RNA sequence: GGGAACGACUCGAGUAGAGUCGAAAACUAAUUUGUGACAGACUGGAAGAUAAUUUUAGGAAGCUGUUUGAAGAGCUCCCGGAAGAGUGUGCACAAGAGUGCAAAACACUUUUUGAGGACAUCAGAAUGAUAACGAAACAUUCGUGUUUCGUUAUCAAAAAGAAACAACAACAACAAC
Reactivity to DMS in 0.01 (KOAc 150mM, MgCl2 10mM, bicine 150mM(pH8.5), 24C), signal-to-noise 4, nucleotides 027 to 126: c050u020a100a130u020u010u010g020u010g010a080c020a040g000a100c040u000g000g010a030a060g010a140u020a050a070u010u000u000u000a070g010g010a100a110g000c030u000g000u000u000u010g020a100a160g010a090g000c110u000c030c020c030g010g010a040a030g000a060g030u000g030u010g000c030a030c020a130a120g000a080g000u000g010c020a090a040a180a300c000a020c010u000u010u000u000u000g000a110g000g000a090c100a060u010c060a090g010a110a100
Reactivity to 2A3 in 0.01 (KOAc 150mM, MgCl2 10mM, bicine 150mM(pH8.5), 24C), signal-to-noise 2, nucleotides 027 to 126: c020u080a040a080u140u050u170g070u060g020a000c000a060g000a050c040u030g050g000a010a000g020a100u140a190a300u240u120u060u060a070g100g020a120a030g050c020u020g010u050u090u130g110a110a040g060a020g050c060u000c050c000c000g000g000a010a030g010a000g020u020g000u000g000c010a020c000a010a200g170a040g170u020g040c000a060a090a170a020c000a000c020u000u020u030u040u060g130a090g020g040a000c020a100u040c000a040g130a140a060

The record gives the reactivity of an RNA of 177 nucleotides to DMS and 2A3. Reactivities are given for positions 27 through 126. For DMS the reverse transcriptase was MarathonRT. Conditions: 150 mM KOAc, 10 mM MgCl2 and 150 mM bicine (pH 8.5), 24 C.